[RMDB]
RNA sequence: GGGAACGACUCGAGUAGAGUCGAAAAGAUAUGGAUACUACGAGCCGAUAAGGUGGUAUCGGAAACGAUACCCACCUUUUGACGGCUCAGUAGUAUCCUAAGUCAAAGUCUAACUUCGGUUAGACAAGUAUAUUAGCAUCUUCGGAUGCUAAUAUACAAAAGAAACAACAACAACAAC
Reactivity to DMS in 0.01 (KOAc 150mM, MgCl2 10mM, bicine 150mM(pH8.5), 24C), signal-to-noise 6, nucleotides 027 to 126: g010a050u010a300u020g000g000a020u000a000c000u000a010c000g000a020g020c010c000g030a200u000a010a010g020g020u000g000g020u000a000u000c000g000g000a120a060a160c000g000a010u000a000c190c050c050a010c000c000u000u000u000u010g010a180c220g000g000c010u000c000a030g020u000a010g000u000a000u000c000c000u000a010a080g010u000c030a110a140a140g000u000c010u000a000a010c000u010u010c240g040g010u000u000a010g010a000c010a040a080
Reactivity to 2A3 in 0.01 (KOAc 150mM, MgCl2 10mM, bicine 150mM(pH8.5), 24C), signal-to-noise 5, nucleotides 027 to 126: g030a000u040a020u110g000g000a000u000a000c010u000a010c010g000a000g010c020c070g200a120u090a300a000g000g000u010g010g000u000a000u000c000g010g000a040a040a000c000g000a000u010a010c010c030c010a040c010c000u020u080u050u120g180a100c120g000g000c010u000c000a000g000u000a000g000u000a000u010c000c000u000a020a000g010u000c010a080a120a040g000u000c000u010a000a020c000u040u060c230g140g010u000u000a000g000a020c000a000a020

Background:
This 177-nucleotide RNA was probed chemically with DMS and 2A3. For 2A3, 23,921 sequencing reads were counted. It was measured as part of the RMDB library TTRDES. Values cover nucleotides 27 to 126. The RNA was probed in 150 mM KOAc, 10 mM MgCl2 and 150 mM bicine (pH 8.5) at 24 C.